[RMDB]
RNA sequence: GGGAACGACUCGAGUAGAGUCGAAAAGGGCGAUUUCGAUCACGUACCCGAACAGGCCUUCUUCUUGAUCGGUGGCCUUGAUGACCUGGCCAAGAAAGCCGAGAGUCUCGGCGCCAAGCUGUGACGGGAGAAAUGAAGCUUUCGAGCUUCAUUUCUCAAAAGAAACAACAACAACAAC
Reactivity to 2A3 in 0.01 (KOAc 150mM, MgCl2 10mM, bicine 150mM(pH8.5), 24C), signal-to-noise 2, nucleotides 027 to 126: g030g020g020c010g080a040u100u050u080c070g060a060u080c030a010c100g070u030a090c000c030c020g000a080a040c040a070g080g040c030c010u090u060c010u070u000c020u040u040g060a060u030c080g050g010u040g030g020c020c000u060u140g080a150u100g010a020c030c010u020g040g010c020c020a010a060g090a110a080a010g020c030c040g030a020g000a030g100u010c010u020c050g000g010c010g020c030c030a070a010g000c010u000g010u040g030a020c020g000g100
Reactivity to DMS in 0.01 (KOAc 150mM, MgCl2 10mM, bicine 150mM(pH8.5), 24C), signal-to-noise 2, nucleotides 027 to 126: g030g000g010c030g020a090u000u010u030c070g000a030u000c060a070c080g020u000a180c050c010c020g020a100a130c130a090g000g000c050c030u000u010c050u000u000c100u020u000g010a050u010c030g000g030u010g010g000c040c000u000u010g020a080u010g010a070c050c030u010g030g000c050c030a060a090g000a060a110a100g010c010c000g020a030g020a290g000u000c030u000c050g010g010c030g020c050c060a060a100g010c020u000g000u000g020a160c160g000g000